[RMDB]
RNA sequence: GGGAACGACUCGAGUAGAGUCGAAAAACGAGUGAGUUACGACUCACUCGACUUUUAAUGCUACCCAAAGGUCGUGACAAGUCGAUAAAACGCAGAGCCAAAAAGUCCGACGUUACGACGUCGGACAACGAGCGAGUUCUGUUCGCAGAACUCGCAACAUAAGGCCCAAGUUCGCUUGGGCCUUAUGAAAAGAAACAACAACAACAAC
Reactivity to 2A3 in 0.01 (KOAc 150mM, MgCl2 10mM, bicine 150mM(pH8.5), 24C), signal-to-noise 1, nucleotides 027 to 156: a000c000g000a000g000u010g000a000g000u020u050a200c260g040a020c140u000c000a010c000u010c000g000a000c010u020u010u040u180a090a050u050g000c020u020a040c010c010c090a070a090a000g040g000u000c020g030u030g030a060c070a150a010g070u080c010g030a080u050a170a070a000a010c020g020c030a020g010a000g060c000c020a060a190a000a060a000g000u000c000c000g000a000c020g010u000u010a090c230g010a000c000g000u000c000g000g030a000c000a000a000c000g010a000g000c030g000a010g000u000u000c000u000g050u040u050c190g040c060a000g000a000a000c000u000c000g060c000a010a010